RNA sequence: GGGAACGACUCGAGUAGAGUCGAAAAGAAGACGUGACGAAAAGUCACGUCAAUACAGAGACUACGAAACUCUGAAAAACACAACAAAAGUGUAAAAUCGUAGCAGGAUCGAGAGAUCCUGAAAAGAGUACUGGAGUAGGUUCGCCUACUCCAGUACAAAAGAAACAACAACAACAAC
Reactivity to 2A3 in 0.01 (KOAc 150mM, MgCl2 10mM, bicine 150mM(pH8.5), 24C), signal-to-noise 3, nucleotides 027 to 126: g200a090a020g000a000c010g000u000g010a000c010g060a150a170a090a050g000u000c000a000c010g000u000c000a000a000u090a000c000a000g020a000g010a030c000u000a000c010g040a120a060a010c010u020c000u000g040a040a010a000a010a000c090a040c040a210a020c040a040a110a090a070g020u030g020u050a020a050a010a040u040c010g000u010a000g000c000a010g000g000a000u000c000g010a000g000a010g010a140u000c000c000u020g000a000a000a010a000g070a010
Reactivity to DMS in 0.01 (KOAc 150mM, MgCl2 10mM, bicine 150mM(pH8.5), 24C), signal-to-noise 3, nucleotides 027 to 126: g020a300a090g000a010c000g010u010g020a020c000g000a100a050a080a150g000u030c000a000c000g000u000c010a070a080u040a210c000a000g030a020g050a240c040u000a020c030g000a150a040a050c010u000c000u000g000a100a110a040a170a040c000a000c000a080a050c280a060a110a150a120g010u000g010u000a010a000a030a220u000c000g000u000a000g000c000a000g000g000a000u020c000g000a140g000a210g000a000u000c000c000u000g010a070a030a010a110g000a170